[RMDB]
RNA sequence: GGGAACGACUCGAGUAGAGUCGAAAAGACAAGAUUGAGCAUGAAUCUACAGAAGAUAGCUCUUCUUCAAGUAGCUUUGUUGACUUGAAUGAUCCAUUUGCACUGCUGAAUGAGGACGAGGAUACUCCGAUGCAUGUCCGUUCGCGGACAUGCAUCGAAAAGAAACAACAACAACAAC
Reactivity to DMS in 0.01 (KOAc 150mM, MgCl2 10mM, bicine 150mM(pH8.5), 24C), signal-to-noise 1, nucleotides 027 to 126: g000a090c140a060a000g000a040u000u000g000a020g010c000a060u000g070a180a110u000c000u070a080c110a050g000a040a020g020a020u000a160g020c100u000c000u000u000c000u000u000c030a000a070g010u000a020g000c050u000u000u000g000u000u020g070a140c100u000u000g060a080a000u040g000a000u080c020c030a120u020u020u000g000c060a070c120u000g000c100u000g000a060a130u000g000a090g000g000a070c020g010a150g000g070a090u000a050c200u010c030
Reactivity to 2A3 in 0.01 (KOAc 150mM, MgCl2 10mM, bicine 150mM(pH8.5), 24C), signal-to-noise 2, nucleotides 027 to 126: g000a000c160a020a130g000a130u030u080g020a020g000c000a060u050g060a080a030u000c040u130a020c070a050g300a300a000g040a070u130a000g020c100u000c000u060u010c000u000u060c020a060a040g030u030a030g020c010u000u040u190g100u020u030g000a070c030u000u040g000a020a000u100g000a080u050c000c000a100u010u040u170g060c010a000c030u000g000c020u020g040a080a030u100g000a160g010g000a020c040g130a040g080g000a000u040a160c040u010c020
An RNA of 177 nucleotides, treated with DMS and 2A3 and read out base by base. The RNA was probed in 150 mM KOAc, 10 mM MgCl2 and 150 mM bicine (pH 8.5) at 24 C. Reactivities are given for positions 27 through 126. DMS adducts were read by reverse transcription with MarathonRT. The 2A3 profile rests on 648 reads.